Structure probing data (2A3 and DMS) for a 207-nucleotide construct. The RNA was probed in 150 mM KOAc, 10 mM MgCl2 and 150 mM bicine (pH 8.5) at 24 C. The DMS profile rests on 2,360 reads. The data come from the RNA Mapping Database (RMDB), library RNAMAK. For 2A3, 1,101 sequencing reads were counted.
RNA sequence: GGGAACGACUCGAGUAGAGUCGAAAAGAGUUCGACUUCGGUCGAACUCAAAAACCGUAGGAAUCCUUGUGGGAGAAUACACAUUCGAAAGAGUGUGUGAUUCGAAGAACACAAUGGGAUUCCUAAACGGAAAAAGGAGUGUCUUCGGACACUCCAAUCAUUUCACAUCCUUCGGGAUGUGAAAUGAAAAAGAAACAACAACAACAAC
Reactivity to 2A3 in 0.01 (KOAc 150mM, MgCl2 10mM, bicine 150mM(pH8.5), 24C), signal-to-noise 1, nucleotides 027 to 156: g010a030g000u010u000c000g000a010c020u050u110c300g010g000u000c000g010a000a010c000u000c000a000a040a000a000a000c000c000g010u010a010g020g000a000a000u020c000c000u010u020g000u010g010g010g000a030g030a010a000u010a030c010a000c000a000u000u010c010g050a150a040a030g000a060g000u000g010u000g010u070g030a020u000u000c000g020a120a010g020a030a000c000a000c000a000a050u230g120g000g000a000u010u000c000c000u000a010a000a020c030g050g090a090a060a080a050a090g010g000a000g000u010g000u050c020u040u110c260g130g000a000c000a010c000u000c000c000a000a000
Reactivity to DMS in 0.01 (KOAc 150mM, MgCl2 10mM, bicine 150mM(pH8.5), 24C), signal-to-noise 1, nucleotides 027 to 156: g040a080g000u000u000c060g000a010c010u000u020c300g090g050u000c000g010a000a040c000u000c000a010a030a060a110a100c000c000g030u000a040g000g030a010a000u000c000c000u020u010g010u000g000g010g000a300g000a020a040u000a000c000a020c000a000u000u000c010g000a210a110a250g000a070g050u020g020u000g000u000g020a010u000u000c000g000a050a090g020a100a150c020a030c020a050a050u020g010g000g000a010u000u000c000c000u000a000a000a040c010g000g010a020a080a110a250a100g020g000a020g010u000g000u000c000u000u030c170g040g000a060c020a020c000u000c000c020a000a070